[RMDB]
RNA sequence: GGGAACGACUCGAGUAGAGUCGAAAAGACACGACGGAGACGUCGUGUCAAAGAGUGGGAAACCACUCAAAGAGCCACAGCUUCGGCUGUGGCUCAAGGCGCGGCUAAGUCCGCGGAACAAACAAAACUAAUAUCAUGGGUUCGCCCAUGAUAUUAGAAAAGAAACAACAACAACAAC
Reactivity to 2A3 in 0.01 (KOAc 150mM, MgCl2 10mM, bicine 150mM(pH8.5), 24C), signal-to-noise 1, nucleotides 027 to 126: g010a000c000a000c000g000a000c000g030g020a030g020a060c000g000u000c000g010u000g000u000c000a010a010a000g000a000g010u000g020g000g010a010a060a060c000c000a000c000u000c000a040a040a000g000a000g020c000c000a000c010a010g040c000u140u150c300g100g000c000u030g010u000g000g000c020u000c010a010a010g010g000c020g000c000g010g070c050u150a240a010g060u100c010c000g000c020g020g040a040a030c080a040a070a000c030a010a110a020a000
Reactivity to DMS in 0.01 (KOAc 150mM, MgCl2 10mM, bicine 150mM(pH8.5), 24C), signal-to-noise 2, nucleotides 027 to 126: g010a020c010a010c000g020a030c000g000g000a220g000a210c010g060u000c000g000u000g030u000c000a030a090a120g000a000g030u010g010g000g000a160a090a220c000c000a000c000u000c000a020a060a120g020a060g020c010c010a000c000a000g000c000u000u000c260g030g020c000u010g050u000g000g000c000u000c010a040a070g000g030c010g020c020g010g030c030u020a130a110g000u010c000c000g010c000g000g010a070a060c140a060a100a090c120a030a050a060a190